An RNA of 177 nucleotides, treated with 2A3 and DMS and read out base by base. 2A3 adducts were read by reverse transcription with SuperScript II with manganese. In probing experiments dimethyl sulfate is read out at A N1 and C N3, which are open when not base-paired. For 2A3, 427 sequencing reads were counted.

RNA sequence: GGGAACGACUCGAGUAGAGUCGAAAAUGCAAUUACUUUAUGAAAAAAGUUAUGAGUAUGGAGAAUAUGAAGGAUUAGGACUUAUAAAAGGAAGUAUUGAUAAACUGGAUAUAAGUUUAAAAGUGCCAAAUGGGAGUGGAUUCGUCCACUCCCAUUUAAAAGAAACAACAACAACAAC
Reactivity to 2A3 in 0.01 (KOAc 150mM, MgCl2 10mM, bicine 150mM(pH8.5), 24C), signal-to-noise 1, nucleotides 027 to 126: u090g010c020a010a070u020u040a020c000u000u000u000a210u280g260a300a000a000a000a000a000g000u050u020a060u000g050a060g000u050a050u040g020g100a080g090a160a070u270a090u150g050a080a000g010g000a050u040u040a010g010g010a000c000u000u000a000u000a010a080a080a000g000g000a060a050g020u080a140u300u000g000a030u030a150a050a000c000u000g000g000a020u050a050u020a060a010g000u000u000u020a070a040a000a000g080u060g220c210c000
Reactivity to DMS in 0.01 (KOAc 150mM, MgCl2 10mM, bicine 150mM(pH8.5), 24C), signal-to-noise 3, nucleotides 027 to 126: u020g010c050a050a090u010u000a030c020u000u000u000a070u040g010a000a120a140a030a020a070g000u030u010a030u000g010a300g010u000a020u000g000g000a090g000a070a110u060a050u020g000a100a030g010g000a050u000u000a100g000g010a000c050u000u030a020u000a000a060a200a130g000g010a080a100g020u010a300u020u030g010a020u020a040a090a050c000u000g000g000a270u000a030u000a000a000g010u000u010u000a040a060a050a080g030u030g030c050c100